An RNA of 177 nucleotides, treated with DMS and 2A3 and read out base by base. Source: RMDB library OK1LIB, as collected in RNAgym. For 2A3 the reverse transcriptase was SuperScript II with manganese. The 2A3 profile rests on 62,509 reads. The DMS profile rests on 60,380 reads. Reactivities are given for positions 27 through 126.
[RMDB]
RNA sequence: GGGAACGACUCGAGUAGAGUCGAAAACAUCUAUCGUACAGGAGAUUCCGAAACGUAUGUGUGCACGCUGCACUUUGAAUCCGCAUUGAGGGUGGUAACUUUCCAGUCGCGCAGAGACGUUGCACGACAAUCGUUACUUAUUCGUAAGUAACGAUUGAAAAGAAACAACAACAACAAC
Reactivity to DMS in 0.01 (KOAc 150mM, MgCl2 10mM, bicine 150mM(pH8.5), 24C), signal-to-noise 9, nucleotides 027 to 126: c130a060u010c040u010a050u020c030g010u010a050c070a200g000g000a070g000a090u010u010c020c020g010a080a080a100c100g020u000a040u010g010u020g010u010g010c030a080c080g010c050u010g010c040a100c040u010u020u010g010a090a070u020c040c050g010c080a080u010u020g010a070g000g010g010u010g000g010u020a060a070c120u010u000u010c040c040a070g010u010c050g010c060g000c020a040g020a110g000a110c120g000u020u000g010c020a050c040g020a140
Reactivity to 2A3 in 0.01 (KOAc 150mM, MgCl2 10mM, bicine 150mM(pH8.5), 24C), signal-to-noise 9, nucleotides 027 to 126: c020a050u050c030u100a130u090c020g050u070a050c050a070g020g050a080g050a110u130u030c020c020g040a090a080a020c040g060u080a040u140g130u020g010u020g020c030a010c080g050c040u050g000c020a010c000u050u040u050g050a050a050u030c020c020g030c100a080u060u150g070a110g030g050g000u030g020g020u070a100a080c060u040u070u020c030c010a040g030u040c020g010c010g000c050a010g040a010g020a110c070g060u080u040g010c030a010c020g040a000